RNA sequence: GGGAACGACUCGAGUAGAGUCGAAAAACUGAGAUAACCAGAUGCCGGCAUAUUAGUGACCGGAAUCCAUUGACGUUGAACCAUGGAUAGUGUCUCGCGGAUCAGGUUAAGGAUUAUUUCCGAACCAACAAGUAAUACUAUUCGUAGUAUUACUUGUAAAAGAAACAACAACAACAAC
Reactivity to 2A3 in 0.01 (KOAc 150mM, MgCl2 10mM, bicine 150mM(pH8.5), 24C), signal-to-noise 6, nucleotides 027 to 126: a000c040u040g010a030g020a070u060a070a060c020c020a030g030a100u140g220c010c010g050g050c090a030u160a150u260u280a150g070u040g050a150c000c000g020g000a020a020u000c000c000a020u030u090g060a070c110g090u090u230g050a060a030c010c000a020u020g010g000a020u030a070g100u100g010u090c010u010c050g030c030g050g000a050u060c030a040g000g020u030u040a080a040g030g010a050u060u050a100u100u230u000c000c010g000a030a030c010c000a000
Reactivity to DMS in 0.01 (KOAc 150mM, MgCl2 10mM, bicine 150mM(pH8.5), 24C), signal-to-noise 9, nucleotides 027 to 126: a090c110u000g010a220g000a090u000a050a060c040c040a090g020a050u000g010c010c010g010g020c070a090u010a110u010u010a120g020u000g000a090c000c010g010g010a100a040u000c010c040a030u000u010g020a070c100g020u010u010g010a100a130c100c030a030u000g000g000a020u000a080g010u010g010u000c020u000c070g010c050g000g000a090u000c060a060g010g000u000u000a040a100g000g000a120u000u010a120u000u000u000c010c010g010a100a110c120c100a100
Source: RMDB library OK2TRN, as collected in RNAgym. An RNA of 177 nucleotides, treated with 2A3 and DMS and read out base by base. Values cover nucleotides 27 to 126. For DMS, 20,636 sequencing reads were counted. Reactivities are rounded to 0.1 and cut off at 0 and 3. Conditions: 150 mM KOAc, 10 mM MgCl2 and 150 mM bicine (pH 8.5), 24 C. For 2A3, 15,727 sequencing reads were counted.